[RMDB]
RNA sequence: GGGAACGACUCGAGUAGAGUCGAAAACACUCAUCAAACGUCUAUUAUCUACAGCAGCAUCUACUAGGCAUCGUAUCUGUGUGGCAUGCACCAGAGUGUUGUCUUAGGUCCAAUGAAACAUUCAGGCCCACAGAGCUAUUGAAAUUCACACUUGAAAAAAAUGGGACUACUUCGGUAGUCCCAUUUUAAAAGAAACAACAACAACAAC
Reactivity to 2A3 in 0.01 (KOAc 150mM, MgCl2 10mM, bicine 150mM(pH8.5), 24C), signal-to-noise 1, nucleotides 027 to 156: c050a050c050u060c040a100u150c030a150a230a030c000g050u000c010u040a160u130u120a030u080c080u080a020c050a020g020c000a000g000c010a060u000c040u050a040c020u030a020g000g030c010a030u030c060g100u150a140u050c030u000g030u020g020u120g030g060c020a070u140g040c000a080c020c010a040g000a000g040u040g010u030u060g050u020c000u000u050a090g110g000u050c010c010a020a070u080g120a010a030a030c030a030u060u060c000a000g090g000c000c000c000a030c010a000g030a010g010c000u060a060u090u100g040a020a060a040u220u140c100a000c000a060c000u000u050g100a030a010a100
This 207-nucleotide RNA was probed chemically with 2A3. It was measured as part of the RMDB library OK3TST. The RNA was probed in 150 mM KOAc, 10 mM MgCl2 and 150 mM bicine (pH 8.5) at 24 C.